The record gives the reactivity of an RNA of 170 nucleotides to 2A3. Conditions: 150 mM KOAc, 10 mM MgCl2 and 150 mM bicine (pH 8.5), 24 C. Values cover nucleotides 27 to 129. For 2A3 the reverse transcriptase was SuperScript II with manganese. The data come from the RNA Mapping Database (RMDB), library 15KLIB. For 2A3, 3,243 sequencing reads were counted.
RNA sequence: GGGAACGACUCGAGUAGAGUCGAAAAGACUCGGACGCGAACCCGUAAGGUGAAACUUUCACAUUUAUUGGGGAGUACACUCGAGGAGUGGAAGGCGGGGAGACGGGGAUCCCGGGCUUACCCACGGAAGGCUGCGGCUUCGGCCGCAGCAAAAGAAACAACAACAACAAC
Reactivity to 2A3 in 0.01 (KOAc 150mM, MgCl2 10mM, bicine 150mM(pH8.5), 24C), signal-to-noise 3, nucleotides 027 to 129: g020a000c000u000c000g040g020a030c090g010c000g070a070a020c000c000c000g000u020a000a010g000g020u000g020a050a160a120c130u080u200u040c020a030c020a120u040u080u050a090u120u300g000g000g000g000a040g040u040a010c040a000c040u050c000g050a040g020g000a010g010u050g010g020a070a030g010g050c040g010g000g040g000a030g010a010c000g000g000g010g010a010u030c000c000c000g000g000g000c000u030u080a090c000c000c000a070c070g100g030a060a080g020